[RMDB]
RNA sequence: GGGAACGACUCGAGUAGAGUCGAAAAGGCUGCAGGACAUCGCGAUGACAAACUAUUUAACCAGAGCCGAAGCGUAAGUGUCGAUACCUGAGGCAGAUGCAGAGACUAGCACAGCACUAACUGCCGCUAUAAUAAUGAUAUUCGUAUCAUUAUUAUAAAAAGAAACAACAACAACAAC
Reactivity to 2A3 in 0.01 (KOAc 150mM, MgCl2 10mM, bicine 150mM(pH8.5), 24C), signal-to-noise 9, nucleotides 027 to 126: g040g000c010u020g010c020a010g030g010a030c010a060u030c030g000c030g090a060u070g030a030c040a020a100a010c020u070a060u110u130u050a060a030c020c000a020g010a000g060c010c020g020a040a010g010c010g030u050a050a050g050u040g030u120c020g020a050u050a110c000c010u030g010a040g020g000c000a010g010a060u050g010c010a000g040a000g020a060c030u030a020g020c040a020c030a060g020c020a010c040u060a090a010c010u050g010c000c010g000c020
Reactivity to DMS in 0.01 (KOAc 150mM, MgCl2 10mM, bicine 150mM(pH8.5), 24C), signal-to-noise 9, nucleotides 027 to 126: g010g010c020u000g000c050a060g000g000a090c070a050u010c040g020c030g010a080u010g010a090c100a070a080a100c090u010a080u020u020u020a100a120c080c050a070g010a120g000c030c030g000a100a090g000c070g010u000a050a070g020u010g000u010c040g000a080u010a070c040c020u000g000a130g000g010c010a030g000a110u020g000c030a050g000a120g000a100c080u010a070g010c050a060c080a070g010c040a070c090u010a060a090c040u000g000c010c030g010c110

Source: RMDB library OK1LIB, as collected in RNAgym. This 177-nucleotide RNA was probed chemically with 2A3 and DMS. The DMS profile rests on 79,069 reads. The RNA was probed in 150 mM KOAc, 10 mM MgCl2 and 150 mM bicine (pH 8.5) at 24 C.